[RMDB]
RNA sequence: GGGAACGACUCGAGUAGAGUCGAAAAGUGUGUCGCUACGGACACGUAUCGUAGCUCUGUACGUUGUGUCUAAAUAAAUGACACUCAUGAAUUCAAGCUAAUGCUAAGUACUGGGUAACAUGAGAAAGGGUUAUCUUAACUUCGGUUAAGAUAACCCAAAAGAAACAACAACAACAAC
Reactivity to DMS in 0.01 (KOAc 150mM, MgCl2 10mM, bicine 150mM(pH8.5), 24C), signal-to-noise 1, nucleotides 027 to 126: g000u050g010u000g040u000c080g010c110u000a090c290g000g000a100c010a020c050g000u040a000u050c010g050u000a030g000c160u040c110u020g010u000a020c070g000u040u000g000u000g000u050c060u000a030a100a000u000a070a040a000u050g000a060c020a080c050u000c040a090u000g000a030a080u100u000c040a010a100g010c020u010a080a170u030g030c100u080a080a010g050u000a120c210u000g000g000g010u000a070a120c020a010u090g000a060g000a130a080a080
Reactivity to 2A3 in 0.01 (KOAc 150mM, MgCl2 10mM, bicine 150mM(pH8.5), 24C), signal-to-noise 3, nucleotides 027 to 126: g050u080g000u000g020u000c040g000c030u010a000c040g000g010a020c020a040c190g010u100a070u120c000g010u000a020g010c070u020c090u280g080u000a020c040g020u010u010g000u010g000u000c000u040a100a100a130u170a040a150a060u200g010a000c010a010c000u010c000a100u050g110a120a040u040u160c050a050a050g000c000u210a160a130u180g030c020u080a160a000g040u030a110c020u070g030g000g050u180a150a080c000a040u000g030a000g060a010a090a050
An RNA of 177 nucleotides, treated with DMS and 2A3 and read out base by base.
2A3 adducts were read by reverse transcription with SuperScript II with manganese.
DMS adducts were read by reverse transcription with MarathonRT.